An RNA of 207 nucleotides, treated with 2A3 and read out base by base. Source: RMDB library OK3TST, as collected in RNAgym. The RNA was probed in 150 mM KOAc, 10 mM MgCl2 and 150 mM bicine (pH 8.5) at 24 C. The 2A3 profile rests on 506 reads.
[RMDB]
RNA sequence: GGGAACGACUCGAGUAGAGUCGAAAAAUUUUAGGGUCUACUACUGGAGGACUAGUCUUAAGACAGUGGGACAAAAGUUCUUGGGAUUUUCUCCCCUUAAUCAAUAUGCACAUGUUGACUACCUAUGUGUAAGGCAGUCUAGAGAAGCAGAGAAGAAGCUACGCAUAAAUUUCGAUUUAUGCGUAGCAAAAGAAACAACAACAACAAC
Reactivity to 2A3 in 0.01 (KOAc 150mM, MgCl2 10mM, bicine 150mM(pH8.5), 24C), signal-to-noise 1, nucleotides 027 to 156: a000u160u220u100u110a060g010g000g000u000c000u010a020c030u030a030c070u120g030g030a030g000g020a020c020u060a030g020u000c020u040u120a130a060g040a010c010a090g080u050g050g000g000a000c010a120a210a030a030g030u050u040c000u030u040g060g000g060a020u150u000u040u120c000u070c020c000c000c000u000u070a080a050u090c060a090a120u050a080u150g050c000a050c000a040u070g000u090u070g030a050c030u080a010c040c000u050a060u060g090u020g060u200a040a000g000g030c000a020g020u000c000u030a020g010a000g000a060a000g070c050a010g030a000g020a090a000g030a030a000